[RMDB]
Conditions: 150 mM KOAc, 10 mM MgCl2 and 150 mM bicine (pH 8.5), 24 C. An RNA of 207 nucleotides, treated with DMS and 2A3 and read out base by base. The DMS profile rests on 2,121 reads. 2A3 adducts were read by reverse transcription with SuperScript II with manganese.

RNA sequence: GGGAACGACUCGAGUAGAGUCGAAAAUAGCGGCGAGCGAACAGGGACGAGCCCGCAUGGCAAUCGGCAUCGCCGAGUUGUGACAGCGCACCGCGAACGCCCCGGACAGGGCGGCCACAGAGGGCGACAGCCCCGUAGCAGCGCGCAGCGGAGCGAGCUAAACAUCUAGGUUCGCCUAGAUGUUUAGAAAAGAAACAACAACAACAAC
Reactivity to DMS in 0.01 (KOAc 150mM, MgCl2 10mM, bicine 150mM(pH8.5), 24C), signal-to-noise 1, nucleotides 027 to 156: u010a140g040c040g050g030c010g000a100g000c020g010a120a120c060a160g010g000g000a120c030g020a270g030c000c000c020g030c020a100u000g010g020c030a150a070u010c040g010g010c020a120u000c040g030c000c000g010a060g020u000u000g000u000g000a230c050a140g000c000g040c040a100c010c040g000c000g030a120a090c030g080c020c010c030c020g000g010a100c070a060g040g030g050c000g010g000c020c050a160c050a130g000a100g000g070g010c020g010a110c150a140g050c000c010c000c010g040u000a070g050c060a100g000c020g060c000g060c080a170g010c010g020g000a130g010c030g000a200g020
Reactivity to 2A3 in 0.01 (KOAc 150mM, MgCl2 10mM, bicine 150mM(pH8.5), 24C), signal-to-noise 2, nucleotides 027 to 156: u150a000g060c000g020g000c010g030a010g020c020g020a130a080c030a200g040g000g110a050c040g060a050g100c010c020c000g010c110a090u130g080g000c050a050a090u030c050g100g020c060a130u090c040g000c000c000g000a010g020u010u000g010u010g030a030c050a060g050c010g000c030a030c070c000g000c000g010a060a030c000g010c000c040c030c030g000g050a010c010a050g000g000g010c000g000g000c000c000a090c060a100g000a140g030g090g020c040g040a020c030a040g010c010c000c000c000g020u030a030g090c050a000g010c020g000c020g000c040a000g000c000g010g000a010g030c010g010a010g050